Conditions: 150 mM KOAc, 10 mM MgCl2 and 150 mM bicine (pH 8.5), 24 C. An RNA of 177 nucleotides, treated with DMS and 2A3 and read out base by base.
RNA sequence: GGGAACGACUCGAGUAGAGUCGAAAAUCAAACGAUUUCGAUCGUUUGAAACGCACCACUCCUGCGGGAGUUAAGGCCAUACGGACAGCCGGGUCCACUGCCAGUCAUUCGGUUUCGACCGAAUGAACGAUAACACUCCAUUCGUGGAGUGUUAUCGAAAAGAAACAACAACAACAAC
Reactivity to DMS in 0.01 (KOAc 150mM, MgCl2 10mM, bicine 150mM(pH8.5), 24C), signal-to-noise 6, nucleotides 027 to 126: u000c000a000a010a020c000g010a010u000u010u010c180g020a020u000c000g010u000u000u000g000a010a070a110c200g010c140a090c040c080a070c030u000c010c010u000g020c140g020g010g010a030g020u000u000a040a080g010g010c020c090a100u010a130c120g010g000a070c050a120g010c040c040g010g000g010u000c020c040a090c120u010g010c040c050a150g010u000c000a010u000u000c000g010g000u000u010u020c190g010a020c000c000g000a010a000u000g000a010a090
Reactivity to 2A3 in 0.01 (KOAc 150mM, MgCl2 10mM, bicine 150mM(pH8.5), 24C), signal-to-noise 5, nucleotides 027 to 126: u010c000a000a000a000c010g000a000u050u060u190c220g090a020u000c010g000u000u000u010g010a010a000a000c060g000c000a040c020c020a010c020u020c000c010u060g020c230g070g000g000a010g000u030u110a080a020g030g000c020c020a070u100a130c110g030g030a030c020a020g070c040c000g100g010g000u000c020c000a040c060u070g020c010c010a030g050u020c000a000u000u000c000g030g010u020u060u090c190g090a010c000c000g000a000a000u000g000a010a000

The 2A3 profile rests on 11,571 reads.